[RMDB]
RNA sequence: GGGAACGACUCGAGUAGAGUCGAAAAUUCUCCAGAGCCUCCAGUGCAGUUCCUUGCUCUAGAGACAACUCCAAGCCCGCUCUGUGUGGCCCCUGGGGAGCCAGUGGUGCUGAGCUGUGAACUGUCCCACCAGGCAAUAAUUCGUUAUUGCCUGGUGAAAAGAAACAACAACAACAAC
Reactivity to DMS in 0.01 (KOAc 150mM, MgCl2 10mM, bicine 150mM(pH8.5), 24C), signal-to-noise 3, nucleotides 027 to 126: u010u000c010u000c010c050a070g010a130g010c020c030u010c050c060a090g030u010g000c020a040g000u000u000c050c050u010u010g000c010u000c020u000a040g000a110g010a070c130a100a100c090u010c080c070a060a130g010c080c030c050g010c040u000c070u000g000u000g010u010g000g010c030c010c050c030u000g010g010g010g010a100g000c030c030a050g040u020g000g020u010g020c040u010g000a040g000c010u000g010u010g000a050a080c030u000g000u000c080c060
Reactivity to 2A3 in 0.01 (KOAc 150mM, MgCl2 10mM, bicine 150mM(pH8.5), 24C), signal-to-noise 1, nucleotides 027 to 126: u010u000c010u000c000c000a060g020a020g150c020c050u050c070c040a010g060u030g050c000a000g000u050u060c020c020u060u060g000c010u010c030u030a070g050a040g020a130c060a060a120c040u060c040c020a060a040g000c000c010c020g000c020u070c050u110g070u040g130u190g060g000c010c000c000c060u010g030g020g000g000a020g110c020c020a050g040u060g040g060u090g050c020u030g020a000g010c020u010g030u060g060a040a000c000u040g040u000c000c000
Conditions: 150 mM KOAc, 10 mM MgCl2 and 150 mM bicine (pH 8.5), 24 C. Structure probing data (DMS and 2A3) for a 177-nucleotide construct. DMS adducts were read by reverse transcription with MarathonRT. Source: RMDB library OK2TRN, as collected in RNAgym.